[RMDB]
RNA sequence: GGGAACGACUCGAGUAGAGUCGAAAAGAGUUCGUUCGCGAACUCAAAAAACCUUUGUGGCAGCACACACCAUUGUCAGAGUACGCCCAUUGGGCGUAGUCUUGGAUUUAUGGUGAAAUGCUGCCACUCUGGUAAAAAAUCGCUCUUCGGAGCGAAACAUAGUGGGAAAGUUCGCUUUCCCACUAUGAAAAGAAACAACAACAACAAC
Reactivity to 2A3 in 0.01 (KOAc 150mM, MgCl2 10mM, bicine 150mM(pH8.5), 24C), signal-to-noise 3, nucleotides 027 to 156: g000a000g000u000u000c010g010u050u100c180g000c010g090a020a010c000u070c040a080a070a030a020a000a060c010c000u020u000u010g000u000g000g010c000a000g020c010a030c000a000c000a000c050c000a000u020u010g000u020c000a010g000a030g080u000a000c010g000c020c000c090a300u300u300g010g000g000c000g000u000a010g090u000c010u040u120g100g010a030u200u300u230a010u040g000g000u010g010a000a020a010u030g000c000u010g000c010c000a000c000u000c000u000g000g000u030a020a050a000a010a020a050u020c000g000c010u020c010u060u050c180g130g010a000g000c000g000a000a000a000
Reactivity to DMS in 0.01 (KOAc 150mM, MgCl2 10mM, bicine 150mM(pH8.5), 24C), signal-to-noise 1, nucleotides 027 to 156: g030a060g050u020u010c020g050u000u030c290g060c020g080a010a020c000u000c000a000a030a070a130a130a020c020c000u020u010u020g010u010g020g020c000a020g010c010a050c090a300c000a010c000c000a040u000u010g050u010c020a040g010a040g000u000a010c000g020c030c020c020a300u000u010g060g040g030c020g000u010a000g010u000c020u020u000g040g040a030u010u010u000a020u000g010g020u000g010a050a070a090u000g010c010u000g010c000c000a000c000u010c010u000g030g040u020a010a030a080a110a120a080u000c020g020c000u000c000u000u020c300g060g000a010g000c000g000a030a020a140